Structure probing data (2A3 and DMS) for a 177-nucleotide construct. The DMS profile rests on 1,992 reads. For DMS the reverse transcriptase was MarathonRT. For 2A3 the reverse transcriptase was SuperScript II with manganese. The 2A3 profile rests on 3,259 reads.
[RMDB]
RNA sequence: GGGAACGACUCGAGUAGAGUCGAAAACAGAUGUUUGAUGAAGUGAUCAUCGCCGUGGCCGCCAGUCCGAGUAAAAACACUCUGUUUACGCUCGAAGAACGGGUCGAGUUCGCGCGCCAUGUCACCAGGAUCGUAUAGUGUUCGCACUAUACGAUCCAAAAGAAACAACAACAACAAC
Reactivity to 2A3 in 0.01 (KOAc 150mM, MgCl2 10mM, bicine 150mM(pH8.5), 24C), signal-to-noise 3, nucleotides 027 to 126: c020a010g080a140u110g160u110u120u170g140a140u090g050a130a020g080u060g070a080u160c010a000u040c010g000c010c010g030u070g030g000c020c010g010c000c010a010g000u010c000c010g020a020g050u090a080a270a020a000a000c050a030c060u120c050u060g020u010u030u010a050c050g000c020u000c000g110a200a090g000a150a050c030g000g000g070u110c050g000a060g030u080u120c010g000c000g010c010g000c040c010a030u070g020u000c020a020c060c020a020
Reactivity to DMS in 0.01 (KOAc 150mM, MgCl2 10mM, bicine 150mM(pH8.5), 24C), signal-to-noise 3, nucleotides 027 to 126: c010a090g010a030u000g010u000u000u020g010a040u010g000a100a160g020u010g010a070u000c040a000u010c160g020c070c060g030u020g020g020c020c040g000c070c040a050g000u000c020c030g010a080g020u010a060a100a020a020a000c010a090c230u000c100u000g030u020u000u000a130c250g010c000u020c000g020a090a150g020a070a090c020g010g010g000u010c030g000a060g020u000u000c040g010c050g000c110g000c020c070a010u000g030u000c000a080c060c050a170